An RNA of 207 nucleotides, treated with DMS and read out base by base.
[RMDB]
RNA sequence: GGGAACGACUCGAGUAGAGUCGAAAAUGGGCCGUGUGCUUAACCAGGACAAGAUCUCCUUCUCUCCAACGUUGUUGCCAACUCAUGAUUCUCCUAUCCUGUGCUUGGAGAGACGUGGACCCAGAGUAAAACGAAGGGUGCUUCGGCACCCUUCGAAGAGAAAAGAUUAGUUCGCUAAUCUUUUCUCAAAAGAAACAACAACAACAAC
Reactivity to DMS in 0.01 (KOAc 150mM, MgCl2 10mM, bicine 150mM(pH8.5), 24C), signal-to-noise 1, nucleotides 027 to 156: u000g000g000g040c000c030g000u000g030u010g000c050u000u020a080a120c080c030a130g040g030a210c100a110a130g030a140u000c000u000c030c010u000u000c010u000c000u000c000c020a100a110c110g000u010u000g010u000u000g000c000c050a080a110c040u010c020a080u010g020a150u010u000c040u010c030c070u000a050u000c000c020u000g000u010g020c040u020u000g000g010a160g010a050g000a020c060g020u000g020g020a050c000c010c020a230g020a150g020u010a050a100a120a140c020g010a030a030g010g020g070u000g000c000u010u000c260g040g010c010a000c000c000c010u000u020c000g000a000a090

The reactions ran in a buffer of 150 mM KOAc, 10 mM MgCl2 and 150 mM bicine (pH 8.5), at 24 C. It was measured as part of the RMDB library M2RFPK. Values cover nucleotides 27 to 156.